An RNA of 207 nucleotides, treated with DMS and 2A3 and read out base by base.
The reactions ran in a buffer of 150 mM KOAc, 10 mM MgCl2 and 150 mM bicine (pH 8.5), at 24 C.
[RMDB]
RNA sequence: GGGAACGACUCGAGUAGAGUCGAAAAGCAACUUUCGAGUUGCAUGAAUGCGUACUACAGAGAUCUCGUUGAAAGCAGCUACCCACCGAGCUCCCAAAUAGGAGCUCGAGGCUGCUGGAGAGGCUCUGUAUCGCCCUUCCUUAGCUUCGGCUAAGAACGAGGGUUUAUUAUUCGUAAUAAACCCUCGAAAAGAAACAACAACAACAAC
Reactivity to DMS in 0.01 (KOAc 150mM, MgCl2 10mM, bicine 150mM(pH8.5), 24C), signal-to-noise 1, nucleotides 027 to 156: g010c010a000a000c010u020u010u020c180g000a060g020u010u000g000c010a090u010g000a040a120u000g000c030g020u000a050c090u000a020c020a030g000a040g000a070u000c020u010c050g020u000u000g020a230a160a070g010c000a000g020c000u010a040c030c000c020a300c110c070g000a030g040c020u010c010c010c030a000a120a260u020a080g010g010a050g000c010u000c010g030a020g090g030c000u000g000c000u000g000g010a140g020a010g000g010c000u000c000u010g000u020a000u000c010g020c000c060c030u010u010c000c000u010u000a000g020c000u010u020c300g080g020c000u000a010a030g000a060a110
Reactivity to 2A3 in 0.01 (KOAc 150mM, MgCl2 10mM, bicine 150mM(pH8.5), 24C), signal-to-noise 4, nucleotides 027 to 156: g000c000a010a000c020u100u140u300c290g160a030g040u020u010g000c020a010u080g160a070a100u140g000c010g030u060a060c030u000a000c030a020g020a130g040a300u090c030u000c000g160u280u130g050a050a060a020g000c000a000g000c000u060a130c010c080c070a020c010c030g010a000g000c000u090c010c030c020a140a280a080u300a170g000g010a000g020c010u010c000g000a000g000g000c000u000g000c000u000g000g000a070g000a000g000g010c000u020c000u000g010u000a000u020c000g020c030c000c000u070u070c000c000u000u000a000g020c000u060u030c260g110g020c070u110a000a010g070a040a020
Values cover nucleotides 27 to 156.